[RMDB]
The record gives the reactivity of an RNA of 177 nucleotides to DMS and 2A3. The reactions ran in a buffer of 150 mM KOAc, 10 mM MgCl2 and 150 mM bicine (pH 8.5), at 24 C. Values cover nucleotides 27 to 126. For DMS the reverse transcriptase was MarathonRT. It was measured as part of the RMDB library OK2TST.

RNA sequence: GGGAACGACUCGAGUAGAGUCGAAAAUGCUCAGGCUGAGCAACGGCCAGGCGGCCUCGGCGACCAAUAAUGACGGCGUGGCAAUCAGCGCUGCCAUUAGAUGAACCGAGCGCACCGCAUCAGCAUAAAUGAGGUGCACUUUCGAGUGCACCUCAUUAAAAGAAACAACAACAACAAC
Reactivity to DMS in 0.01 (KOAc 150mM, MgCl2 10mM, bicine 150mM(pH8.5), 24C), signal-to-noise 2, nucleotides 027 to 126: u000g010c000u010c090a190g000g000c030u000g020a150g000c180a060a060c030g000g010c040c050a240g030g010c010g010g000c120c030u000c000g010g020c010g000a160c210c130a110a080u000a000a000u000g000a000c020g000g010c070g050u010g000g060c200a110a140u010c210a210g010c010g030c000u000g000c000c000a000u000u000a010g010a170u000g020a210a050c020c000g000a000g010c140g100c100a080c070c010g000c010a040u000c140a000g000c020a150u000a050
Reactivity to 2A3 in 0.01 (KOAc 150mM, MgCl2 10mM, bicine 150mM(pH8.5), 24C), signal-to-noise 1, nucleotides 027 to 126: u090g010c030u000c080a040g030g070c070u070g010a040g280c030a060a160c020g020g000c020c030a010g020g100c000g000g010c000c000u000c010g000g030c000g030a020c050c000a030a040u000a030a000u020g000a010c010g000g000c000g000u040g040g070c150a060a180u210c060a110g000c010g000c000u010g050c000c020a010u000u010a080g090a260u150g010a050a010c000c000g000a010g020c090g000c060a060c080c000g080c030a180u140c020a010g020c010a010u150a150